[RMDB]
Structure probing data (DMS and 2A3) for a 177-nucleotide construct.
For DMS, 1,165 sequencing reads were counted.
DMS adducts were read by reverse transcription with MarathonRT.
Reactivities are given for positions 27 through 126.
Conditions: 150 mM KOAc, 10 mM MgCl2 and 150 mM bicine (pH 8.5), 24 C.

RNA sequence: GGGAACGACUCGAGUAGAGUCGAAAAAUACAGCGUAAUCGAGCGGAGGAAAACGGCACUCCGAAAAUCCGGUACGAAUAUGAUCCCACUGCGUCGACGCUAGAUGCAGAACCGGAUUGCCGAGGAAUUCGAUCUAGAAGUUCGCUUCUAGAUCGAAAAAAGAAACAACAACAACAAC
Reactivity to DMS in 0.01 (KOAc 150mM, MgCl2 10mM, bicine 150mM(pH8.5), 24C), signal-to-noise 2, nucleotides 027 to 126: a050u020a040c120a090g010c070g000u000a130a060u010c050g000a120g010c030g010g000a040g050g000a050a090a090a180c020g000g060c010a020c020u000c020c010g000a010a030a010a000u000c000c000g010g010u000a150c230g000a070a080u010a090u000g000a120u000c010c000c010a300c020u000g000c000g000u000c020g000a120c210g030c200u000a040g000a030u000g000c030a000g020a110a050c000c010g000g000a010u010u000g020c000c010g000a110g020g000a090a110
Reactivity to 2A3 in 0.01 (KOAc 150mM, MgCl2 10mM, bicine 150mM(pH8.5), 24C), signal-to-noise 1, nucleotides 027 to 126: a010u160a020c100a030g050c010g070u150a120a080u080c070g020a050g090c020g000g030a020g010g010a230a160a000a000c010g000g000c000a010c020u070c030c000g010a090a020a000a000u000c000c000g060g040u010a030c060g140a110a120u250a180u210g080a020u020c000c000c000a020c010u010g000c010g020u020c000g010a070c030g040c260u050a050g010a000u020g030c000a000g010a050a000c010c010g000g000a010u000u030g000c000c000g000a060g000g030a020a130